[RMDB]
This 177-nucleotide RNA was probed chemically with 2A3 and DMS. 2A3 adducts were read by reverse transcription with SuperScript II with manganese. It was measured as part of the RMDB libraries RFM100 and RFMREP. The reactions ran in a buffer of 150 mM KOAc, 10 mM MgCl2 and 150 mM bicine (pH 8.5), at 24 C. Values cover nucleotides 27 to 126.
RNA sequence: GGGAACGACUCGAGUAGAGUCGAAAAGUUCGCUAUUCGACCACAUGCUCGGAAGGAGGAGAUCAUGGCCGGGCCGGCCUGGGCUGCCGAAGCUCAGCAGCUCUGAAGUCCUUUGUGUAAGUCGCGCGAUAAACAACCGAUUCGUCGGUUGUUUAUCAAAAGAAACAACAACAACAAC
Reactivity to 2A3 in 0.01 (KOAc 150mM, MgCl2 10mM, bicine 150mM(pH8.5), 24C), signal-to-noise 6, nucleotides 027 to 126: g040u060u130c130g010c130u080a100u040u030c000g010a010c000c020a060c040a190u170g010c000u010c020g010g030a040a030g030g030a010g020g020a030g010a030u150c080a130u170g040g000c000c020g010g070g060c070c070g010g010c010c000u030g010g020g000c000u010g000c010c010g030a030a010g000c010u010c020a010g000c010a010g000c010u000c020u050g080a070a030g070u050c000c000u030u050u080g100u020g020u080a060a060g010u030c020g000c010g020c040
Reactivity to DMS in 0.01 (KOAc 150mM, MgCl2 10mM, bicine 150mM(pH8.5), 24C), signal-to-noise 7, nucleotides 027 to 126: g000u000u010c180g020c020u000a100u000u010c000g010a030c020c070a160c180a200u020g010c010u000c010g010g000a070a100g010g000a070g000g010a040g010a090u020c140a060u010g000g010c020c010g000g000g030c110c040g020g010c030c020u020g010g000g000c020u000g010c030c040g010a090a070g000c060u000c010a300g000c030a030g000c010u000c010u020g010a110a120g000u010c010c010u000u010u010g000u010g010u020a090a090g000u000c010g010c100g010c210